Chemical mapping of a 207-nucleotide RNA with 2A3.
Conditions: 150 mM KOAc, 10 mM MgCl2 and 150 mM bicine (pH 8.5), 24 C.
For 2A3, 516 sequencing reads were counted.
Source: RMDB library OK3TST, as collected in RNAgym.
RNA sequence: GGGAACGACUCGAGUAGAGUCGAAAAUAUUUAUCACUUAUGGCUACUUAAUGCACCAUGCAAUUUCUAUACCUACAUUUUCUUAAAUGCUUUCCUGUUCGAUACACAAAUAGUUUCUAUUAUUCACUAUUAUAAAUACAGAUCAGCAACCCUAAUCCCGGAUAUACAGAUUCGUCUGUAUAUCCGGAAAAGAAACAACAACAACAAC
Reactivity to 2A3 in 0.01 (KOAc 150mM, MgCl2 10mM, bicine 150mM(pH8.5), 24C), signal-to-noise 2, nucleotides 027 to 156: u140a040u120u300u030a130u040c020a000c060u070u030a030u040g050g030c010u150a020c040u130u080a150a020u180g020c020a020c040c000a000u020g000c020a020a180u020u120u070c010u140a090u050a030c010c000u070a100c050a080u070u050u080u160c030u080u210a160a220a130u080g000c000u020u050u040c000c010u040g060u050u050c010g000a030u060a170c040a000c000a130a070a000u020a020g000u000u130u100c100u050a080u170u040a080u290u100c010a000c020u020a020u130u000a080u090a080a080a010u200a030c010a000g040a010u040c010a000g130c000a000a050c000c000c000u140a030a100u280c100